[RMDB]
RNA sequence: GGGAACGACUCGAGUAGAGUCGAAAAGAUAUGGACACCUUUGAUCGUAGGAGCGAAGAACUCGGAAACGAGGGAGCUCUUACGGGAGGUGUCCUAAGUCAAAGGCUGCCUCUUCGGAGGCAGCCAAGCGUAUAGAGUUGUUCGCAACUCUAUACGCAAAAGAAACAACAACAACAAC
Reactivity to DMS in 0.01 (KOAc 150mM, MgCl2 10mM, bicine 150mM(pH8.5), 24C), signal-to-noise 1, nucleotides 027 to 126: g000a020u000a300u000g000g000a020c000a010c000c010u000u000u000g010a120u010c000g000u000a010g000g000a020g010c000g010a080a100g000a110a280c000u000c000g000g000a110a130a160c010g000a010g010g000g000a100g020c000u000c000u000u000a000c000g010g010g010a000g020g000u010g010u000c000c000u000a000a070g010u000c010a120a090a140g000g020c010u010g010c020c000u000c010u000u030c200g010g010a040g010g000c000a000g010c020c000a010a000
The record gives the reactivity of an RNA of 177 nucleotides to DMS. The DMS profile rests on 1,225 reads. The data come from the RNA Mapping Database (RMDB), library TTRDEL. Conditions: 150 mM KOAc, 10 mM MgCl2 and 150 mM bicine (pH 8.5), 24 C.